[RMDB]
RNA sequence: GGGAACGACUCGAGUAGAGUCGAAAAGACUGACCACUGAAGUAAAGGUGUGACUUCAGACAGGCAGUCGCUCUAGUCACAUCCAAAAUCCAUGCCGCAAUCAAGGACCACUUAAUGGCACCGAUCACGAUGAGUCGUAUUUCGAUACGACUCAUCGAAAAGAAACAACAACAACAAC
Reactivity to 2A3 in 0.01 (KOAc 150mM, MgCl2 10mM, bicine 150mM(pH8.5), 24C), signal-to-noise 2, nucleotides 027 to 126: g000a000c020u040g170a300c000c000a000c030u000g020a000a010g020u040a100a150a160g150g000u080g050u060g070a020c010u020u010c010a090g040a160c050a040g020g010c000a010g000u010c040g000c020u040c010u020a050g000u050c000a000c030a090u010c040c020a040a010a090a100u090c050c040a020u050g020c040c000g040c040a000a050u060c020a050a110g020g010a030c010c020a050c050u030u130a090a040u110g020g030c010a020c000c010g000a020u140c040a040
Reactivity to DMS in 0.01 (KOAc 150mM, MgCl2 10mM, bicine 150mM(pH8.5), 24C), signal-to-noise 2, nucleotides 027 to 126: g020a000c020u000g000a160c010c000a250c010u000g000a030a020g000u000a060a070a110g020g020u010g020u000g000a010c000u000u010c020a000g030a050c230a090g010g000c000a040g030u010c020g010c080u000c000u010a100g010u010c030a080c090a060u010c030c060a070a030a090a070u000c060c040a060u000g020c040c010g000c120a110a020u000c080a030a110g010g000a110c020c040a050c080u010u010a050a080u000g010g010c020a040c020c060g000a040u020c140a160
Structure probing data (2A3 and DMS) for a 177-nucleotide construct.
2A3 is a SHAPE reagent: it acylates the 2'-hydroxyl of flexible nucleotides of all four kinds.
The 2A3 profile rests on 2,211 reads.
For 2A3 the reverse transcriptase was SuperScript II with manganese.
Source: RMDB library OK2TRN, as collected in RNAgym.
For DMS, 1,715 sequencing reads were counted.